Notes:
This 207-nucleotide RNA was probed chemically with 2A3. The 2A3 profile rests on 2,396 reads.
[RMDB]
RNA sequence: GGGAACGACUCGAGUAGAGUCGAAAAGGUGAGAAAGGAGCUGUCAGCACUAAGCCGGACGGCGCCCUCGCACCAGUUCCGCUGUGGGUUCACCUACAAGAACGUACGGUGUUGAGGCCCUGUCCGCCGCUGCGCUGCCACCUACUCUUCGCGCCGCGAUGUCUGCGAAGUUCGCUUCGCAGACAUCAAAAGAAACAACAACAACAAC
Reactivity to 2A3 in 0.01 (KOAc 150mM, MgCl2 10mM, bicine 150mM(pH8.5), 24C), signal-to-noise 2, nucleotides 027 to 156: g030g000u030g000a060g030a020a030a000g000g040a020g010c000u040g030u060c020a010g020c030a040c120u190a070a020g040c040c010g000g000a000c000g000g040c070g030c050c000c000u000c010g000c000a000c020c000a010g010u000u000c000c030g000c010u000g000u020g020g010g020u290u270c170a300c270c000u030a020c010a010a150g000a000a000c020g020u160a040c120g000g020u030g000u100u300g020a010g010g000c000c000c030u040g010u000c000c000g010c020c020g010c020u000g000c040g000c010u000g010c010c000a020c000c000u020a040c000u010c000u060u090c110g010c020g000c020c020g070c070